[RMDB]
RNA sequence: GGGAACGACUCGAGUAGAGUCGAAAAUUAUGACUGUUUCCAUGCUAACUCGGGAGCACACAAAGCCAAAGAAAAUUCUGUCCUUCCAGAUCUCUAGCUCAUAGAUCCCCAAAAUUUUUGUGUCCUAUGGAAAAUGCUAAGUUGGUGUGGGCUCCAAUAAAUAAGAGGGGUUCGCCCCUCUUAUUUAAAAAGAAACAACAACAACAAC
Reactivity to DMS in 0.01 (KOAc 150mM, MgCl2 10mM, bicine 150mM(pH8.5), 24C), signal-to-noise 1, nucleotides 027 to 156: u000u010a110u010g000a090c110u000g010u000u100u000c040c010a140u020g010c000u000a050a160c090u000c080g020g000g000a050g000c010a080c060a060c050a110a160a130g010c070c050a030a050a090g000a050a090a070a120u010u000c030u000g010u000c020c060u020u010c070c020a120g010a120u000c010u020c030u010a090g010c040u010c050a120u000a070g000a060u000c020c030c000c040a050a060a060a130u000u020u020u000u000g020u000g000u000c120c020u000a140u000g030g010a070a080a080a100u000g000c040u010a060a230g000u000u000g010g000u000g030u000g010g040g000c050u000c000c010a030a260